Source information: This 207-nucleotide RNA was probed chemically with DMS and 2A3. For 2A3, 732 sequencing reads were counted. DMS adducts were read by reverse transcription with MarathonRT. The reactions ran in a buffer of 150 mM KOAc, 10 mM MgCl2 and 150 mM bicine (pH 8.5), at 24 C. Source: RMDB library M2RFPK, as collected in RNAgym.
RNA sequence: GGGAACGACUCGAGUAGAGUCGAAAAAACUCUUUAAGGCAGUAACGAACUAAUUCUAAGCAAGUAAUGGAGAAAUGCCAGGGUCACUAUCUAGCCAUAAUAGUGCUUGACAGUAUGAUACUAACUGAAUAUGGUAAACCGUUCGCGGUUUACCAAAACUGAUAGGAGUGUUCGCACUCCUAUCAGUAAAAGAAACAACAACAACAAC
Reactivity to DMS in 0.01 (KOAc 150mM, MgCl2 10mM, bicine 150mM(pH8.5), 24C), signal-to-noise 2, nucleotides 027 to 156: a060a040c020u000c020u000u000u000a070a090g010g000c040a130g000u010a040a070c040g000a120a110c020u020a010a110u010u010c030u000a110a100g020c080a060a060g010u000a090a120u020g020g020a130g020a080a060a060u000g010c040c020a090g000g030g000u010c010a040c020u020a000u010c060u010a110g000c080c040a110u000a070a090u000a070g010u000g020c020u010u000g000a020c030a020g010u000a050u000g000a100u010a100c030u000a010a140c030u010g010a050a110u000a140u020g000g000u000a000a000a010c010c000g040u000u010c300g010c020g080g020u000u000u010a000c000c010a000a000a050
Reactivity to 2A3 in 0.01 (KOAc 150mM, MgCl2 10mM, bicine 150mM(pH8.5), 24C), signal-to-noise 2, nucleotides 027 to 156: a000a000c090u060c000u000u180u060a090a050g040g000c000a010g050u030a090a050c030g060a010a000c050u020a020a060u140u040c060u060a080a050g050c110a030a010g030u150a090a090u110g100g030a070g030a070a080a060u070g020c000c020a030g000g020g000u030c020a000c050u010a030u150c040u040a010g040c010c010a030u120a180a070u100a140g060u130g040c030u050u050g030a010c010a010g080u130a040u070g070a020u040a100c030u080a130a040c040u060g040a090a040u110a160u210g000g000u000a000a000a000c020c000g000u010u060c200g020c030g180g000u000u000u000a000c000c000a000a000a000